[RMDB]
RNA sequence: GGGAACGACUCGAGUAGAGUCGAAAAGGUACACCUUGUAUAAAGGUUGCUGCUAUGCAGUCUAAACUUACAGAUCUUAAAUGCACAUCUGUGGUUCUCCUCUCUGUGCUCCAACAGUUACACUUAGGUAUUAAACAUGCUUCGGCAUGUUUAAUACAAAAGAAACAACAACAACAAC
Reactivity to DMS in 0.01 (KOAc 150mM, MgCl2 10mM, bicine 150mM(pH8.5), 24C), signal-to-noise 5, nucleotides 027 to 126: g000g010u000a060c110a050c010c000u010u000g010u020a120u010a100a050a000g000g010u000u000g020c030u000g010c040u000a110u010g020c040a030g020u000c110u010a050a060a060c040u000u000a050c040a030g000a030u000c100u010u010a040a100a080u000g010c160a080c190a060u000c020u010g020u000g000g010u000u000c060u000c020c040u000c030u000c020u000g010u000g010c050u000c030c050a060a070c100a070g020u010u000a060c200a070c060u000u010a060g010
Reactivity to 2A3 in 0.01 (KOAc 150mM, MgCl2 10mM, bicine 150mM(pH8.5), 24C), signal-to-noise 5, nucleotides 027 to 126: g040g020u060a010c010a040c070c010u010u030g090u080a180u150a150a070a010g000g000u010u050g010c010u010g020c020u130a070u300g020c010a010g010u000c040u120a060a070a070c020u060u110a020c050a030g030a040u010c020u070u160a140a210a130u200g030c040a040c010a060u020c010u020g010u020g050g000u040u030c020u010c020c000u020c010u020c010u030g020u040g040c030u010c030c000a050a060c010a070g030u070u080a060c090a030c050u030u050a030g090
An RNA of 177 nucleotides, treated with DMS and 2A3 and read out base by base. The RNA was probed in 150 mM KOAc, 10 mM MgCl2 and 150 mM bicine (pH 8.5) at 24 C. Values cover nucleotides 27 to 126. DMS adducts were read by reverse transcription with MarathonRT.